RNA sequence: GGGAACGACUCGAGUAGAGUCGAAAAUUCAUGGAGUGUAUUGGCAUUCUAGGUUAGCAUGUAGGAGCGGAAGAGGGCGACUGUAUUGCGUAGCGAGAGGUGAAAGUUGACGACCUACGUAGGACAAGCCACUGUUUGAAUUCGUUCAAACAGUGGCAAAAGAAACAACAACAACAAC
Reactivity to 2A3 in 0.01 (KOAc 150mM, MgCl2 10mM, bicine 150mM(pH8.5), 24C), signal-to-noise 4, nucleotides 027 to 126: u150u080c050a040u080g000g020a040g030u040g030u060a110u190u130g100g010c010a010u020u010c020u040a030g080g010u040u080a020g020c040a010u050g030u040a030g030g060a020g010c030g020g010a060a020g000a010g030g010g020c010g020a010c050u040g020u070a060u040u100g020c010g010u010a020g010c040g020a060g000a030g080g040u080g050a080a060a050g040u020u060g070a070c050g010a020c010c000u010a020c030g040u030a040g030g040a030c040a100a020
Reactivity to DMS in 0.01 (KOAc 150mM, MgCl2 10mM, bicine 150mM(pH8.5), 24C), signal-to-noise 3, nucleotides 027 to 126: u010u020c080a110u030g020g000a030g010u030g020u010a120u040u010g020g000c060a060u000u000c020u010a040g010g000u000u020a100g010c020a050u030g000u020a030g010g000a060g010c110g000g000a100a040g050a150g000g010g000c090g000a090c170u010g020u030a030u000u000g020c050g000u000a020g000c030g010a100g010a060g000g000u000g010a030a070a130g000u010u000g010a070c130g020a080c300c010u000a030c050g000u010a010g010g000a060c170a060a130